Conditions: 150 mM KOAc, 10 mM MgCl2 and 150 mM bicine (pH 8.5), 24 C. Structure probing data (DMS) for a 177-nucleotide construct.

[RMDB]
RNA sequence: GGGAACGACUCGAGUAGAGUCGAAAAGAUAUGGAGCUACCCUGCUUUUGACGCUAGUUGUACUUCCGAAUAUCGGAAACGAUAUACCGGAAGUACAACUAGCGAUAAGCAGGUAGCUCCUAAGUCAUCUCAGAAUCAUGUUCGCAUGAUUCUGAGAAAAAGAAACAACAACAACAAC
Reactivity to DMS in 0.01 (KOAc 150mM, MgCl2 10mM, bicine 150mM(pH8.5), 24C), signal-to-noise 1, nucleotides 027 to 126: g000a030u010a300u000g010g000a010g000c000u000a000c070c050c040u000g010c000u000u010u010u020g050a220c100g040c010u000a000g050u030u000g000u000a010c000u000u000c000c000g010a090a010u000a000u000c000g010g000a120a070a190c020g010a000u020a020u000a100c170c030g000g000a030a000g030u000a010c000a000a000c020u010a000g020c000g010a000u000a010a020g030c010a020g020g020u000a010g030c000u000c020c000u000a010a060g050u000c030a160